The record gives the reactivity of an RNA of 177 nucleotides to DMS and 2A3. It was measured as part of the RMDB library OK1LIB. 2A3 adducts were read by reverse transcription with SuperScript II with manganese. For 2A3, 3,186 sequencing reads were counted.
RNA sequence: GGGAACGACUCGAGUAGAGUCGAAAAACCGUGUUAAGAACAGCCACGGUCCAAGGGCCCAGCUUAGACUUCGCCUUGUCUCUUUUGAGGCGCAACAUUAGACAAGCGCAAACUGACCAAGGACACAGCUAUUAUGCGAGUUCGCUCGCAUAAUAGCAAAAGAAACAACAACAACAAC
Reactivity to DMS in 0.01 (KOAc 150mM, MgCl2 10mM, bicine 150mM(pH8.5), 24C), signal-to-noise 2, nucleotides 027 to 126: a030c020c010g070u000g010u000u000a100a050g010a050a140c110a040g010c100c020a080c130g050g000u000c020c050a050a080g020g010g000c120c010c090a180g020c060u010u000a040g040a120c140u010u000c110g000c000c090u000u020g000u010c000u000c120u000u010u000u030g000a150g000g010c020g050c000a000a120c190a040u010u000a120g000a100c090a050a070g060c030g020c010a090a050a060c000u040g000a120c120c030a020a090g030g020a020c070a090c160a230
Reactivity to 2A3 in 0.01 (KOAc 150mM, MgCl2 10mM, bicine 150mM(pH8.5), 24C), signal-to-noise 4, nucleotides 027 to 126: a000c010c010g030u030g010u030u170a290a150g060a160a030c030a040g040c040c020a040c050g010g010u030c010c010a050a060g050g050g020c020c020c000a000g010c030u080u080a040g010a090c000u020u020c080g000c000c000u000u040g010u020c000u000c000u090u090u010u040g070a090g120g000c030g000c030a020a060c000a150u040u060a020g030a050c040a080a030g000c020g010c080a070a070a050c050u060g020a040c010c030a040a050g000g030a000c030a000c030a080